[RMDB]
RNA sequence: GGGAACGACUCGAGUAGAGUCGAAAAAGCAACGAGUGUGUGUGGGACGUUUUAUCCCAAGCUCUGAGUAGAGCACGCGCUCACACACACCGCGAGCGAGCAUCAGCAGAGCGGAAACGCUGGUAAAGCUCGACUUAAUAUUCGUAUUAAGUCGAGCAAAAGAAACAACAACAACAAC
Reactivity to 2A3 in 0.01 (KOAc 150mM, MgCl2 10mM, bicine 150mM(pH8.5), 24C), signal-to-noise 4, nucleotides 027 to 126: a000g070c050a050a060c010g020a110g050u010g000u000g010u000g000u010g020g000g030a050c020g010u050u010u120u220a170u110c040c030c020a020a020g000c000u010c010u040g300a240g170u300a020g160a000g000c020a010c020g040c010g010c010u010c000a000c000a000c000a010c000a000c000c000g040c010g000a020g010c010g000a020g010c020a060u090c020a010g060c020a010g030a030g180c020g030g000a090a070a020c040g020c000u040g000g030u120a110a090a000
Reactivity to DMS in 0.01 (KOAc 150mM, MgCl2 10mM, bicine 150mM(pH8.5), 24C), signal-to-noise 5, nucleotides 027 to 126: a090g010c020a160a050c020g010a260g020u000g010u000g010u000g020u000g000g000g020a070c010g020u000u010u010u010a120u010c020c030c010a080a140g010c000u010c000u000g010a210g020u010a070g010a010g010c010a110c090g000c070g000c000u010c000a010c010a000c000a010c000a010c000c020g000c010g000a250g000c020g000a120g010c120a040u010c040a050g000c050a080g010a120g020c030g000g000a090a090a120c070g020c000u000g000g000u000a060a080a150

Chemical mapping of a 177-nucleotide RNA with 2A3 and DMS. For 2A3 the reverse transcriptase was SuperScript II with manganese. For DMS the reverse transcriptase was MarathonRT.